[RMDB]
RNA sequence: GGGAACGACUCGAGUAGAGUCGAAAAUACAAACACCAAGGACGGUGUUAUUAUAGAUUUAUCAAAACAACCACAGAAGCGGAGAAAUAAAUGACUACUUUAACUAUUUGGUUUGACGAAAAUGAAGAAACAUACUGUGUGAACAUUGAUGAAAGUCCAAUCAUCAUGACUUCGGUCAUGAUGAUUGAAAAGAAACAACAACAACAAC
Reactivity to DMS in 0.01 (KOAc 150mM, MgCl2 10mM, bicine 150mM(pH8.5), 24C), signal-to-noise 2, nucleotides 027 to 156: u010a050c030a080a080a060c020a110c020c000a140a110g040g000a140c130g040g050u010g020u010u000a010u000u000a090u010a140g020a170u000u000u010a120u000c060a060a060a090a090c050a020a210c020c010a030c060a080g010a100a080g050c050g000g010a120g000a100a070a050u010a040a060a060u000g000a140c050u000a090c050u000u000u000a050a050c060u000a100u010u010u000g030g030u010u000u000g000a040c060g010a040a060a040a080u000g000a030a040g030a150a110a080c050a120u000a080c040u010g030u010g020u000g010a060a060c030a060u000u000g010a040u010g030a080a060a110g000u010c000
Reactivity to 2A3 in 0.01 (KOAc 150mM, MgCl2 10mM, bicine 150mM(pH8.5), 24C), signal-to-noise 4, nucleotides 027 to 156: u140a010c050a010a090a000c020a010c020c010a060a090g220g010a020c080g000g030u010g030u020u040a080u050u120a060u060a050g050a070u090u110u070a100u090c030a010a020a000a100c010a030a050c010c040a040c010a080g070a130a040g050c070g070g060a020g060a090a070a020u120a030a090a030u080g030a020c000u050a010c020u170u090u080a100a050c020u040a110u210u100u020g050g010u020u050u110g010a020c010g030a070a090a060a070u070g000a020a030g010a030a070a000c030a020u030a030c000u010g030u030g000u010g180a060a010c010a020u000u050g010a010u030g010a010a060a010g030u080c070
This 207-nucleotide RNA was probed chemically with DMS and 2A3. For 2A3, 3,610 sequencing reads were counted. For 2A3 the reverse transcriptase was SuperScript II with manganese. It was measured as part of the RMDB library OK3TST.